[RMDB]
RNA sequence: GGGAACGACUCGAGUAGAGUCGAAAAGUCGAUGGAGGGGACGUGCCGUUCAGCAUAAAGCAGAGUCCUGUGCUCAUGCCCGACGGCGAGUUCCGGACCGACGAGGUGGUCGCCCGCUUCCUCGAGGCUCAUGGUAUCCGUUCGCGGAUACCAUGAGAAAAGAAACAACAACAACAAC
Reactivity to 2A3 in 0.01 (KOAc 150mM, MgCl2 10mM, bicine 150mM(pH8.5), 24C), signal-to-noise 1, nucleotides 027 to 126: g050u030c050g020a130u190g140g050a060g050g010g010g010a010c030g020u060g000c020c000g000u060u110c020a020g000c020a020u070a120a110a010g020c000a020g010a020g200u120c040c060u050g040u070g010c010u050c000a060u070g030c000c030c050g010a020c010g010g010c000g000a030g000u000u010c010c050g020g020a010c000c000g040a050c040g000a030g000g000u030g010g000u000c040g020c030c000c000g020c010u000u010c000c000u050c010g020a070g040g020
Reactivity to DMS in 0.01 (KOAc 150mM, MgCl2 10mM, bicine 150mM(pH8.5), 24C), signal-to-noise 2, nucleotides 027 to 126: g010u000c020g010a120u030g000g020a250g020g000g000g010a010c020g000u010g020c010c000g020u010u010c240a160g000c020a030u000a090a100a090g000c000a030g010a200g010u000c150c070u000g010u000g020c010u000c230a060u000g010c040c020c230g010a030c010g000g000c010g010a080g000u000u000c000c000g000g000a140c040c010g010a070c030g020a040g010g000u000g000g010u000c040g010c030c010c010g010c060u000u000c000c000u000c020g000a160g030g000
The record gives the reactivity of an RNA of 177 nucleotides to 2A3 and DMS. The reactions ran in a buffer of 150 mM KOAc, 10 mM MgCl2 and 150 mM bicine (pH 8.5), at 24 C. For DMS the reverse transcriptase was MarathonRT.